RNA sequence: GGGAACGACUCGAGUAGAGUCGAAAAAAGGAGCUGCGCAGCGAGUACGCCGGCGCGGUGACGGCCUGCGCCGCGCGCAUCGCUCAGGGCGUCUUUGGCCCGUCCGGCCGCUCCAUCCUGCGCAUCCCCCUCAUUCUCCAUUCGUGGAGAAUGAGGGAAAAGAAACAACAACAACAAC
Reactivity to DMS in 0.01 (KOAc 150mM, MgCl2 10mM, bicine 150mM(pH8.5), 24C), signal-to-noise 2, nucleotides 027 to 126: a070a040g010g000a050g020c040u000g010c050g020c110a040g010c040g000a050g020u000a150c040g010c010c010g000g020c020g010c020g000g010u000g000a100c250g000g010c070c000u010g010c030g030c000c000g000c170g020c020g000c070a080u000c070g030c010u010c110a060g000g030g010c030g000u010c140u000u000u000g000g000c030c030c010g010u020c050c020g030g010c030c070g030c000u000c030c010a040u010c050c010u000g000c150g010c090a150u020c080c060
Reactivity to 2A3 in 0.01 (KOAc 150mM, MgCl2 10mM, bicine 150mM(pH8.5), 24C), signal-to-noise 1, nucleotides 027 to 126: a050a010g020g000a050g000c050u010g050c160g000c050a010g000c010g030a020g090u050a020c040g000c000c000g000g000c040g000c020g050g020u060g090a050c060g120g060c010c020u080g000c000g000c020c000g060c050g000c000g010c050a060u040c010g010c010u030c060a000g000g010g040c000g070u150c060u220u120u160g120g030c000c010c000g000u050c020c090g080g000c010c000g000c010u010c030c000a020u040c000c000u030g000c080g020c060a170u150c030c030

This 177-nucleotide RNA was probed chemically with DMS and 2A3. The RNA was probed in 150 mM KOAc, 10 mM MgCl2 and 150 mM bicine (pH 8.5) at 24 C. For 2A3 the reverse transcriptase was SuperScript II with manganese. The 2A3 profile rests on 1,651 reads.